[RMDB]
RNA sequence: GGGAACGACUCGAGUAGAGUCGAAAAUUGAAGAUGCUGCCAUGCUGGUCUUGAAGAUGGAGGAGGAGCCAUGAGCCCAAAAAUGCAGAUGGCCUCUAGAACCUGGCAGAGGGGAGGAAAUGGAUUCUUCCUUACUGCCUCCAGGAGGAAUGCUGCAUAAAAUGGAGGUGUUCGCACCUCCAUUUUAAAAAGAAACAACAACAACAAC
Reactivity to DMS in 0.01 (KOAc 150mM, MgCl2 10mM, bicine 150mM(pH8.5), 24C), signal-to-noise 1, nucleotides 027 to 156: u000u000g000a080a100g000a140u000g000c040u040g020c050c040a080u000g000c010u010g050g000u000c040u000u010g000a070a090g000a040u000g000g010a150g030g000a140g000g020a090g020c050c010a110u000g020a150g030c000c060c020a050a030a070a120a100u010g000c020a020g000a040u010g050g030c010c000u000c010u000a100g030a090a110c070c030u000g000g000c010a030g020a300g020g000g050g030a010g010g010a000a050a170u010g020g050a230u010u010c010u010u000c010c010u010u010a110c010u010g000c010c010u000c000c040a200g010g010a060g020g010a040a080u010g020c000u000g030c000a080
Reactivity to 2A3 in 0.01 (KOAc 150mM, MgCl2 10mM, bicine 150mM(pH8.5), 24C), signal-to-noise 2, nucleotides 027 to 156: u050u070g030a020a020g090a070u030g050c030u020g010c090c050a090u090g000c040u010g020g030u000c010u050u070g040a060a040g060a050u060g040g000a000g030g010a030g000g030a000g020c030c000a090u060g010a000g010c000c010c010a040a050a080a000a000u020g020c000a000g010a030u040g300g020c000c000u010c000u000a060g010a090a090c040c080u020g000g000c000a000g000a040g020g020g000g030a000g020g040a020a120a070u180g180g050a070u100u000c000u010u030c000c000u000u030a170c000u000g000c000c000u000c010c010a150g000g000a020g000g020a000a050u250g020c000u000g020c000a000